[RMDB]
RNA sequence: GGGAACGACUCGAGUAGAGUCGAAAAGGCUAUGACUCGUGUCCGUCGGCGUAGCCGACAACAUGCCCAGGUAGCCCAGACCUUCAAGGCUACGGUGCGUUGCGACGCACGGUCUGAUUCUUCACAACUGUGAGAAAGACUUCGGUCUUUCUCACAGAAAAGAAACAACAACAACAAC
Reactivity to 2A3 in 0.01 (KOAc 150mM, MgCl2 10mM, bicine 150mM(pH8.5), 24C), signal-to-noise 3, nucleotides 027 to 126: g010g010c020u030a040u230g060a050c020u000c030g010u010g010u040c030c040g000u010c010g000g000c160g100u090a060g000c000c000g050a000c000a020a050c030a050u160g020c020c000c000a010g040g000u010a010g000c000c040c110a030g010a020c000c000u000u010c010a010a010g000g010c000u010a000c010g000g000u000g000c000g000u010u040g060c150g090a000c000g000c000a000c010g000g000u000c010u000g000a060u070u080c060u080u080c070a050c010a250a100
Reactivity to DMS in 0.01 (KOAc 150mM, MgCl2 10mM, bicine 150mM(pH8.5), 24C), signal-to-noise 2, nucleotides 027 to 126: g000g000c010u000a020u010g000a010c020u000c000g000u000g010u030c050c200g020u000c000g040g040c000g030u010a070g010c000c000g000a000c000a070a030c180a060u000g040c030c030c010a050g000g000u000a010g010c010c000c300a010g020a000c020c000u050u030c260a030a180g000g050c000u020a000c000g000g000u000g010c000g000u000u010g010c110g000a050c000g020c030a000c000g000g000u020c010u000g000a260u010u020c050u010u000c070a140c190a120a090
This 177-nucleotide RNA was probed chemically with 2A3 and DMS. DMS adducts were read by reverse transcription with MarathonRT. It was measured as part of the RMDB libraries RFM100 and RFMREP. Conditions: 150 mM KOAc, 10 mM MgCl2 and 150 mM bicine (pH 8.5), 24 C.